[RMDB]
RNA sequence: GGGAACGACUCGAGUAGAGUCGAAAACGGCGAAUUUUAAUUCAGGCUAGUCAUUCAUUAGCGUGUCGGUUCGCAGGUGGGUGGCGAAAUUAAAGAUCGACUAAGCAUGUAGUACCAAUGAUGAACGGUUUUCGGACGCGGGUUCAACUCCCGCCAGCUUACAAUGUUGCUUCGGCAACAUUGUAAGAAAAGAAACAACAACAACAAC
Reactivity to 2A3 in 0.01 (KOAc 150mM, MgCl2 10mM, bicine 150mM(pH8.5), 24C), signal-to-noise 1, nucleotides 027 to 156: c040g030g000c010g040a090a020u080u140u150u220a180a100u110u080c040a040g010g060c020u040a040g020u040c020a050u050u010c010a030u040u130a060g020c040g030u020g020u050c060g020g020u030u040c010g000c000a080g040g000u060g010g020g000u020g020g000c000g020a000a000a070u110u090a110a040a020g030a020u030c040g050a040c020u100a040a040g010c040a060u060g030u090a060g040u030a070c010c010a090a060u070g050a010u050g000a080a050c040g040g000u060u000u070u070c010g020g010a020c020g010c010g020g020g000u040u130c010a020a010c080u030c000c000c000g010c000c000a010g020